[RMDB]
RNA sequence: GGGAACGACUCGAGUAGAGUCGAAAAGCAGUUUCACUCACUGUAGAGUCUGAGCGCAGACUGUCAGUCGUGCUACCACAUGCACGUGAUCAGAGUAUGUGUGAACUCUGACUGACGACACAAUCGCUUGUGUCCUAUAUAAUGAAACUGGUGAGUCCCAUGCCAUGGACUUCGGUCCAUGGCAUGGAAAAGAAACAACAACAACAAC
Reactivity to DMS in 0.01 (KOAc 150mM, MgCl2 10mM, bicine 150mM(pH8.5), 24C), signal-to-noise 1, nucleotides 027 to 156: g040c000a000g030u010u000u000c000a080c040u010c060a080c110u010g020u000a010g010a060g060u000c010u000g020a300g000c090g040c070a030g000a100c000u000g040u000c000a030g060u000c010g020u010g000c040u010a300c010c100a050c040a130u000g030c030a170c040g000u020g010a130u000c150a170g010a090g030u000a010u000g030u010g040u010g000a050a070c000u000c030u010g040a010c000u030g000a000c000g000a000c000a040c020a040a060u000c060g000c120u000u000g010u000g020u010c000c000u000a010u000a040u000a040a050u000g000a040a000a030c040u040g010g000u000g010a160g010u020c020
Reactivity to 2A3 in 0.01 (KOAc 150mM, MgCl2 10mM, bicine 150mM(pH8.5), 24C), signal-to-noise 3, nucleotides 027 to 156: g080c010a010g000u000u000u000c030a020c030u000c010a090c030u020g000u020a000g000a010g000u010c000u000g010a040g150c100g000c040a000g000a000c000u000g010u020c000a000g010u000c010g010u000g000c020u080a100c020c050a060c020a050u070g030c000a010c060g050u110g180a200u230c060a020g030a000g020u040a020u110g160u050g090u070g080a030a020c020u000c040u100g000a010c000u000g000a000c010g010a000c000a000c000a000a190u300c080g030c220u030u030g000u000g000u030c000c000u020a020u010a010u020a010a020u020g000a000a000a000c000u010g110g050u080g050a030g080u080c010